[RMDB]
RNA sequence: GGGAACGACUCGAGUAGAGUCGAAAAUAGAAUACGCUUAGGUGUGGAGCAGGCAUACGAUGGAAGAUCGUAAUCCAUCGAGCAAGUCAAACGGUGUGACUCAUGUGCCGAUCAGCAUGGUCGCAGAGAUUGGGAAGUCGUUCGCGACUUUCCAAUCAAAAGAAACAACAACAACAAC
Reactivity to 2A3 in 0.01 (KOAc 150mM, MgCl2 10mM, bicine 150mM(pH8.5), 24C), signal-to-noise 3, nucleotides 027 to 126: u080a030g100a050a080u120a070c080g000c060u090u100a060g000g060u050g050u040g070g020a040g030c060a050g070g000c010a060u110a110c040g010a010u010g000g020a020a040g050a110u100c050g020u040a040a100u050c010c010a010u010c010g000a010g010c020a070a000g030u110c030a070a060a050c100g110g000u050g010u020g030a010c020u010c210a010u040g030u050g030c060c030g070a090u080c010a000g010c000a020u030g020g000u020c010g000c030a030g010a000
Reactivity to DMS in 0.01 (KOAc 150mM, MgCl2 10mM, bicine 150mM(pH8.5), 24C), signal-to-noise 5, nucleotides 027 to 126: u010a090g020a140a110u010a090c140g010c050u000u010a080g010g030u010g000u000g000g010a070g020c050a100g000g010c050a060u010a140c030g010a020u000g010g020a070a080g010a090u010c130g010u010a140a120u000c000c000a010u000c010g000a070g040c100a080a070g000u000c070a050a070a100c140g000g000u000g010u000g000a030c020u010c050a050u000g010u000g010c060c010g000a020u000c050a220g000c050a030u010g010g010u000c010g000c070a100g000a120
The record gives the reactivity of an RNA of 177 nucleotides to 2A3 and DMS. For DMS, 6,299 sequencing reads were counted. DMS adducts were read by reverse transcription with MarathonRT. The RNA was probed in 150 mM KOAc, 10 mM MgCl2 and 150 mM bicine (pH 8.5) at 24 C. For 2A3, 5,871 sequencing reads were counted. High 2A3 reactivity points to a flexible backbone, as in loops and unpaired stretches.